[RMDB]
Source: RMDB library PDB130, as collected in RNAgym. Chemical mapping of a 207-nucleotide RNA with 2A3. The reactions ran in a buffer of 150 mM KOAc, 10 mM MgCl2 and 150 mM bicine (pH 8.5), at 24 C. Values are in units of 0.01, from 0 to 300, in steps of 10. 2A3 adducts were read by reverse transcription with SuperScript II with manganese.
RNA sequence: GGGAACGACUCGAGUAGAGUCGAAAAGCACCACAAGGGGUGGAACCUGCGGCUCAAUUGGAGUCAACGCCUGGAAUCUUACCGGGGGAGACCGCAGUAUGACGGCCAGGCUAACGACCUUGCCUGACUCGCGGAGAGGAGGUGCAUGGCCGUCGCCGUGUCACUACUACUUCGGUAGUAGUGACACAAAAGAAACAACAACAACAAC
Reactivity to 2A3 in 0.01 (KOAc 150mM, MgCl2 10mM, bicine 150mM(pH8.5), 24C), signal-to-noise 1, nucleotides 027 to 156: g000c010a000c020c020a020c120a000a070g020g000g040g000u040g010g020a010a000c030c000u040g010c040g010g010c000u050c060a000a220u060u150g250g040a000g060u000c080a080a010c190g110c010c000u000g000g000a080a030u070c030u180u100a070c010c000g000g000g000g000g000a010g090a030c000c030g000c000a030g040u110a090u240g000a000c000g000g090c000c000a000g030g000c030u080a140a020c080g040a150c010c010u000u120g040c000c000u110g140a300c020u060c130g040c140g040g230a050g000a000g020g010a000g000g040u020g000c040a030u010g050g000c000c000g000u010c010g000c000c020